[RMDB]
Notes: Structure probing data (2A3 and DMS) for a 177-nucleotide construct.

RNA sequence: GGGAACGACUCGAGUAGAGUCGAAAAUCUGAAAUCCUAAGUUUACUCAUUAUGGGACUCAUAUCAAUGAGCAUAAGCACAGGUAGUCCUUCAUGAAGUUUCUGGUUCUAACAAGUGGCUCCAAGAAAGUAUUUACUAUCUUCGGAUAGUAAAUACUAAAAGAAACAACAACAACAAC
Reactivity to 2A3 in 0.01 (KOAc 150mM, MgCl2 10mM, bicine 150mM(pH8.5), 24C), signal-to-noise 3, nucleotides 027 to 126: u040c020u020g030a060a020a030u040c020c000u040a150a030g010u010u080u050a060c020u040c030a040u030u120a050u150g050g020g080a050c040u050c110a040u080a100u190c100a110a130u040g010a020g010c020a050u070a140a030g010c040a020c010a060g000g040u030a010g050u030c010c000u020u040c050a080u130g050a080a040g030u040u050u050c040u060g050g000u030u040c020u060a060a010c020a060a100g030u040g070g000c000u020c030c020a010a020g060a060a110
Reactivity to DMS in 0.01 (KOAc 150mM, MgCl2 10mM, bicine 150mM(pH8.5), 24C), signal-to-noise 5, nucleotides 027 to 126: u010c070u010g010a060a100a110u000c020c010u000a100a160g010u000u000u000a050c020u010c020a030u010u010a080u010g000g010g010a130c110u000c080a060u000a090u000c160a070a050u000g000a020g010c100a080u000a050a080g010c040a100c150a030g010g000u000a080g000u010c060c040u000u000c100a060u000g010a050a080g000u000u000u000c040u010g010g010u000u010c040u000a060a060c090a050a050g010u000g000g010c020u010c020c060a040a100g010a100a070
The RNA was probed in 150 mM KOAc, 10 mM MgCl2 and 150 mM bicine (pH 8.5) at 24 C.